The record gives the reactivity of an RNA of 177 nucleotides to 2A3 and DMS. For DMS, 7,713 sequencing reads were counted. For DMS the reverse transcriptase was MarathonRT.

RNA sequence: GGGAACGACUCGAGUAGAGUCGAAAAGAUAUGGACGGGCUGGCAGCGAUGAAACUUAUCGGAAACGAUAAGUGGAGCUGCAGUAACCGUCCUAAGUCAAAGAAUACGUGGUUCGCCACGUAUUCAAUCAAAUUUACAUCUUCGGAUGUAAAUUUGAAAAAGAAACAACAACAACAAC
Reactivity to 2A3 in 0.01 (KOAc 150mM, MgCl2 10mM, bicine 150mM(pH8.5), 24C), signal-to-noise 3, nucleotides 027 to 126: g010a030u060a020u100g000g010a010c010g000g030g040c050u110g280g120c030a000g010c000g240a300u030g000a010a010a010c000u000u020a000u000c010g010g010a040a040a030c000g000a010u000a010a010g000u010g010g010a000g000c000u000g000c010a000g000u030a050a090c000c010g000u010c000c000u000a000a000g000u000c020a130a070a020g010a000a000u010a000c000g000u010g000g120u070u120c300g040c100c000a000c000g000u000a000u010u000c000a000a040
Reactivity to DMS in 0.01 (KOAc 150mM, MgCl2 10mM, bicine 150mM(pH8.5), 24C), signal-to-noise 4, nucleotides 027 to 126: g010a030u000a220u010g000g010a030c010g010g010g030c080u010g030g030c010a010g020c000g020a110u020g020a130a190a030c000u000u000a000u000c010g010g000a090a070a120c000g000a010u000a000a000g010u000g000g000a040g020c000u000g010c000a010g010u010a140a190c010c000g020u000c000c000u000a010a080g000u000c020a100a130a140g000a030a010u000a000c000g030u000g000g020u000u010c300g020c020c000a010c000g010u000a000u000u000c000a080a170